[RMDB]
RNA sequence: GGGAACGACUCGAGUAGAGUCGAAAAGAUAUGGAGUACUGGGAGAAGUGGAUUGCGAUGAAAUUUCUGUAUCGGAAACGAUACAGAAAUGGAGCAGCACACUUCGAAGAACAGUACUCCUAAGUCACAUGUUGGUACAGUUCGCUGUACCAACAUGAAAAGAAACAACAACAACAAC
Reactivity to 2A3 in 0.01 (KOAc 150mM, MgCl2 10mM, bicine 150mM(pH8.5), 24C), signal-to-noise 1, nucleotides 027 to 126: g030a080u070a130u300g000g000a000g000u030a000c020u050g000g010g030a120g000a040a000g000u000g000g050a180u040u090g020c090g300a300u090g060a070a030a000u000u020u050c000u000g000u010a010u000c020g000g000a020a090a030c010g010a020u010a000c000a020g000a000a000a000u010g020g010a010g000c010a030g030c040a000c010a010c040u000u000c000g010a180a060g050a070a030c000a000g000u000a000c000u000c020c000u010a030a000g020u050c000a000
Reactivity to DMS in 0.01 (KOAc 150mM, MgCl2 10mM, bicine 150mM(pH8.5), 24C), signal-to-noise 2, nucleotides 027 to 126: g000a070u000a300u010g000g040a000g000u000a000c010u000g010g000g010a180g010a010a030g000u000g000g000a100u020u000g030c000g000a120u050g030a080a100a010u000u000u010c000u010g000u000a000u000c010g010g020a130a090a190c000g020a000u000a000c010a010g000a010a000a000u000g000g020a120g010c050a040g000c300a030c050a000c010u000u000c000g030a110a140g000a090a080c010a020g020u000a010c000u010c000c000u000a010a030g010u000c010a300